[RMDB]
RNA sequence: GGGAACGACUCGAGUAGAGUCGAAAAGAUAUGGACUUUGUAACUCCCAGAUCGCUAUGAACUACUCGUAACCAUCGGAAACGAUGGCCCGAGCAUAGCGAUCUGGGAGAAUCAAAGUCCUAAGUCAGUACUGUCCAUAGUUCGCUAUGGACAGUACAAAAGAAACAACAACAACAAC
Reactivity to 2A3 in 0.01 (KOAc 150mM, MgCl2 10mM, bicine 150mM(pH8.5), 24C), signal-to-noise 1, nucleotides 027 to 126: g060a000u110a050u220g000g000a000c010u000u000u000g040u110a120a180c000u010c030c000c030a010g000a000u010c020g080c040u030a010u050g030a130a120c110u300a110c000u300c000g000u040a090a030c040c000a000u010c010g010g090a110a050a000c030g000a010u000g020g000c010c020c000g000a000g000c000a020u000a000g000c000g000a000u000c000u000g000g000g010a000g000a000a000u000c000a000a000a000g000u010c000c000u000a010a010g020u010c040a010
Reactivity to DMS in 0.01 (KOAc 150mM, MgCl2 10mM, bicine 150mM(pH8.5), 24C), signal-to-noise 2, nucleotides 027 to 126: g010a080u010a300u000g020g010a030c010u000u010u010g000u020a210a300c020u010c000c000c000a000g010a010u000c000g000c000u000a000u000g000a080a050c110u040a300c000u010c020g000u000a180a240c010c000a000u000c020g010g000a140a140a240c000g030a000u000g020g020c210c300c000g000a010g060c000a000u020a000g000c000g000a000u000c000u020g000g000g000a000g010a020a070u000c010a000a000a000g010u000c000c010u000a010a050g000u000c090a130
This 177-nucleotide RNA was probed chemically with 2A3 and DMS. DMS (dimethyl sulfate) methylates the pairing face of unpaired adenines and cytosines. For DMS the reverse transcriptase was MarathonRT. 2A3 adducts were read by reverse transcription with SuperScript II with manganese. The DMS profile rests on 1,321 reads. For 2A3, 3,521 sequencing reads were counted. The reactions ran in a buffer of 150 mM KOAc, 10 mM MgCl2 and 150 mM bicine (pH 8.5), at 24 C.